[RMDB]
RNA sequence: GGGAACGACUCGAGUAGAGUCGAAAACGCUGACGAUUACGAUCGUCAGCGAAACGUGACGAAAAGUCACGAAAACGUCGGAGAGAAAAGCACCAUGGACUCAACCGACAAAAACCAAAGGUGCGAACCUGGCUGGGUAUUUCGAUACCCAGCCAGGAAAAGAAACAACAACAACAAC
Reactivity to 2A3 in 0.01 (KOAc 150mM, MgCl2 10mM, bicine 150mM(pH8.5), 24C), signal-to-noise 2, nucleotides 027 to 126: c010g000c000u000g000a000c000g010a010u010u010a030c300g060a010u000c000g000u000c000a010g000c010g000a000a000a000c010g000u010g000a030c000g010a300a000a100a180g000u010c000a000c040g000a120a000a000a030c100g000u010c000g010g020a010g000a030g000a080a000a020a120g030c010a000c010c000a180u190g050g030a020c020u000c010a140a250c040c020g010a010c070a040a050a110a080a000c190c100a100a070a050g000g000u020g010c070g000a040a020